[RMDB]
RNA sequence: GGGAACGACUCGAGUAGAGUCGAAAAUAGGUAAAAAUUUUAAGCUCGAUAACUAUUCGCUUUUGGCUGAUUGUCGAGUGGCAGGAAGGUCACAUUGCCAGAAUUUCGAUUCGCAUCCACAGCCUGACACUACGGAUGGAUUCGUCCAUCCGUAGUGAAAAGAAACAACAACAACAAC
Reactivity to DMS in 0.01 (KOAc 150mM, MgCl2 10mM, bicine 150mM(pH8.5), 24C), signal-to-noise 2, nucleotides 027 to 126: u020a110g010g000u000a020a030a080a130a110u010u040u000u000a090a260g010c020u000c050g000a030u000a020a060c110u010a060u020u000c190g000c090u000u000u010u020g020g010c030u000g000a080u000u000g010u000c000g010a020g020u010g010g000c070a090g000g000a060a060g000g000u000c070a040c090a070u010u010g000c020c030a090g000a070a060u000u000u000c050g000a030u000u010c060g010c100a090u000c010c040a080c070a100g000c030c030u000g010a180
Reactivity to 2A3 in 0.01 (KOAc 150mM, MgCl2 10mM, bicine 150mM(pH8.5), 24C), signal-to-noise 2, nucleotides 027 to 126: u030a000g030g010u110a090a060a050a190a300u050u120u110u070a060a030g000c020u000c020g000a000u030a080a050c030u070a170u150u080c040g000c020u060u100u180u160g110g000c030u040g040a100u000u100g020u040c030g030a010g020u050g020g000c010a000g000g070a130a030g040g020u040c050a000c000a080u000u110g060c000c010a000g030a090a090u020u040u040c030g040a020u020u030c020g020c050a060u040c010c010a040c010a000g020c020c000u000g030a000

The data come from the RNA Mapping Database (RMDB), library OK2TST. An RNA of 177 nucleotides, treated with DMS and 2A3 and read out base by base. Reactivities are rounded to 0.1 and cut off at 0 and 3. For DMS, 1,862 sequencing reads were counted. The RNA was probed in 150 mM KOAc, 10 mM MgCl2 and 150 mM bicine (pH 8.5) at 24 C. The 2A3 profile rests on 1,218 reads.